[RMDB]
About this RNA
An RNA of 177 nucleotides, treated with 2A3 and DMS and read out base by base. DMS adducts were read by reverse transcription with MarathonRT. The DMS profile rests on 1,969 reads. The 2A3 profile rests on 2,167 reads. For 2A3 the reverse transcriptase was SuperScript II with manganese. Conditions: 150 mM KOAc, 10 mM MgCl2 and 150 mM bicine (pH 8.5), 24 C.
RNA sequence: GGGAACGACUCGAGUAGAGUCGAAAAAAUCGGAGGCAUUUCCCGUUAAGAGCUGGAAGUGCAUCUUGGAAUGGGAACCAAGGAGGAUGGAAAGAAAGGAGGAAUCCCCCGAUCCGAAUGGCCCGACGAUUCCAUAUACGUUCGCGUAUAUGGAAUCAAAAGAAACAACAACAACAAC
Reactivity to 2A3 in 0.01 (KOAc 150mM, MgCl2 10mM, bicine 150mM(pH8.5), 24C), signal-to-noise 2, nucleotides 027 to 126: a010a000u060c030g000g010a020g020g030c000a010u000u010u020c000c000c000g010u030u040a120a050g080a010g210c000u000g010g010a020a000g020u000g010c020a030u030c010u020u060g040g040a130a060u120g050g020g030a070a110c020c030a060a010g010g010a020g060g020a060u160g050g030a080a090a070g100a130a110a000g140g040a100g000g050a080a120u000c000c010c010c010c000g040a050u000c010c000g010a040a080u090g110g060c030c010c030g010a030c060
Reactivity to DMS in 0.01 (KOAc 150mM, MgCl2 10mM, bicine 150mM(pH8.5), 24C), signal-to-noise 2, nucleotides 027 to 126: a090a060u000c010g010g020a050g000g000c070a030u000u000u000c000c000c050g000u000u010a120a090g010a170g030c020u000g010g000a040a040g030u010g000c020a050u000c040u000u000g000g000a060a050u000g010g020g020a090a100c030c040a010a030g000g010a070g010g000a050u000g010g010a110a070a090g000a050a080a090g010g000a080g000g010a130a110u010c020c020c030c020c040g030a110u010c000c010g000a080a100u000g050g010c010c000c000g000a100c200